RNA sequence: GGGAACGACUCGAGUAGAGUCGAAAAAGAACAGAGUGAAAUUUUGACUGUCAACUUAACACUUUGCGUUUUCGAUGAAGAAAAGAAACAAAAACCGUGGGUUGCAGAUGCGAAGAAAAAAGAAGAUACAGAGAAGUUUGUUCUUGAAUACUUCGGGCCUGAACGAUCUAUUCGUAGAUCGUUCAGGAAAAGAAACAACAACAACAAC
Reactivity to 2A3 in 0.01 (KOAc 150mM, MgCl2 10mM, bicine 150mM(pH8.5), 24C), signal-to-noise 1, nucleotides 027 to 156: a010g060a030a000c010a010g040a030g030u050g050a000a050a100u070u090u070u080g080a040c040u040g100u280c010a010a010c010u040u160a040a000c000a000c020u020u010u030g050c000g010u000u000u000u110c060g010a070u120g070a100a160g060a090a050a040a010g010a030a020a000c020a000a020a300a010a010c020c030g010u040g050g060g000u050u020g000c010a010g040a000u040g050c010g040a000a070g000a060a160a000a020a000a000g040a010a040g000a040u020a050c010a000g120a010g010a100a000g070u050u110u050g050u000u140c000u050u020g020a070a060u080a070c010u070u060c000g010g050g000